[RMDB]
RNA sequence: GGGAACGACUCGAGUAGAGUCGAAAACGCUGGGACCGAUGGUAGGGGAGCUUGUACUGAAGCGCGCACGGUACAAAGCGAAGAACCGAGAGUAGGUCCUGUGCUGAAGCGCGCACGGCAACCGAAAGGUGCGAAAAUCCGGUCUUCGGACCGGAAACUAAUUGAAUAAGUUCGCUUAUUCAAUUAGAAAAGAAACAACAACAACAAC
Reactivity to 2A3 in 0.01 (KOAc 150mM, MgCl2 10mM, bicine 150mM(pH8.5), 24C), signal-to-noise 2, nucleotides 027 to 156: c050g000c030u050g000g000g000a000c010c010g070a090u080g070g090u040a040g000g010g020g000a000g010c000u030u020g010u000a000c010u010g040a190a040g010c050g010c010g000c040a020c000g000g000u010a000c050a090a230a050g000c020g110a250a040g000a070a010c030c010g030a040g010a010g120u040a000g000g010u010c000c000u000g000u010g000c010u090g020a090a030g000c010g000c000g000c010a000c000g050g000c050a080a060c010c010g060a120a040a000g030g010u030g010c040g030a120a020a010a090u010c010c000g000g000u000c010u020u090c240g130g000a010c010c000g000g010a000a000a000
Reactivity to DMS in 0.01 (KOAc 150mM, MgCl2 10mM, bicine 150mM(pH8.5), 24C), signal-to-noise 1, nucleotides 027 to 156: c040g000c030u000g000g040g020a110c050c030g020a110u050g030g000u000a210g040g030g000g020a130g020c030u000u000g060u000a000c000u000g020a030a100g030c070g070c000g050c020a300c050g000g000u000a020c020a060a050a120g000c020g020a090a170g010a140a120c010c000g000a290g010a140g040u010a200g000g000u010c020c000u010g040u020g000c040u000g000a070a040g020c020g020c030g000c020a130c000g020g000c000a130a090c040c030g000a090a150a180g030g000u000g000c000g020a060a090a130a180u000c010c000g000g000u000c000u000u000c250g040g040a050c000c010g000g000a000a000a100